[RMDB]
RNA sequence: GGGAACGACUCGAGUAGAGUCGAAAACGUGAACAUCGCUCUGCUAAGUCCCGUCGUUCUUCCAGUCAGAGCGAGAUUGUAAGCAACCUUAUGCGCAAUGAAGACAUAGAGGGACUUCUAUAUCAAGAAAUAUCCCUAGUUUCGACUAGGGAUAUUUAAAAGAAACAACAACAACAAC
Reactivity to DMS in 0.01 (KOAc 150mM, MgCl2 10mM, bicine 150mM(pH8.5), 24C), signal-to-noise 9, nucleotides 027 to 126: c130g010u050g000a120a110c110a110u000c000g010c000u010c000u000g010c130u020a050a030g000u010c020c020c020g010u010c050g000u010u000c010u000u010c030c080a090g010u020c010a010g000a030g000c010g010a020g000a030u010u010g010u010a120a160g000c030a080a180c130c100u020u040a070u010g010c030g010c050a040a040u010g000a120a090g000a060c090a040u010a040g000a090g010g010g010a040c010u010u010c100u010a050u020a100u010c080a100a080g000
Reactivity to 2A3 in 0.01 (KOAc 150mM, MgCl2 10mM, bicine 150mM(pH8.5), 24C), signal-to-noise 6, nucleotides 027 to 126: c060g120u110g090a040a030c020a090u010c000g000c000u000c000u000g030c060u090a030a040g030u010c010c010c050g060u050c010g010u050u020c010u170u050c010c000a030g070u110c010a000g020a000g010c020g010a000g000a010u010u040g040u070a060a090g010c010a020a110c020c070u160u170a090u170g010c020g000c020a010a050u150g050a090a060g050a040c050a050u110a030g100a070g030g000g020a020c000u040u010c050u070a200u050a070u060c040a110a050g060
Background:
The record gives the reactivity of an RNA of 177 nucleotides to DMS and 2A3. The RNA was probed in 150 mM KOAc, 10 mM MgCl2 and 150 mM bicine (pH 8.5) at 24 C. 2A3 adducts were read by reverse transcription with SuperScript II with manganese. DMS adducts were read by reverse transcription with MarathonRT.